RNA sequence: GGGAACGACUCGAGUAGAGUCGAAAAGUGCCGAAGCCGAGCGGCGCAUGGGAUCUGCUGAUCACGCGCGCGUCGCUGAACGGGCUCGCGCGGCAUCUGCGCCACCGCGGCGAAACGCUCGAGAGCAGCCACGAGCAUAGUUCGCUAUGCUCGUGGCAAAAGAAACAACAACAACAAC
Reactivity to DMS in 0.01 (KOAc 150mM, MgCl2 10mM, bicine 150mM(pH8.5), 24C), signal-to-noise 1, nucleotides 027 to 126: g010u020g030c000c070g000a100a210g000c000c030g080a050g010c020g000g000c020g030c040a090u020g020g020g070a010u000c040u010g070c240u000g060a010u000c000a100c060g010c080g030c030g030c160g000u000c070g000c010u080g000a120a150c300g000g040g010c040u000c030g000c050g020c020g030g000c130a080u000c080u000g020c090g030c040c040a110c040c060g020c000g000g000c000g000a070a060a100c090g000c010u000c110g030a190g000a180g000c140a040
This 177-nucleotide RNA was probed chemically with DMS. The RNA was probed in 150 mM KOAc, 10 mM MgCl2 and 150 mM bicine (pH 8.5) at 24 C.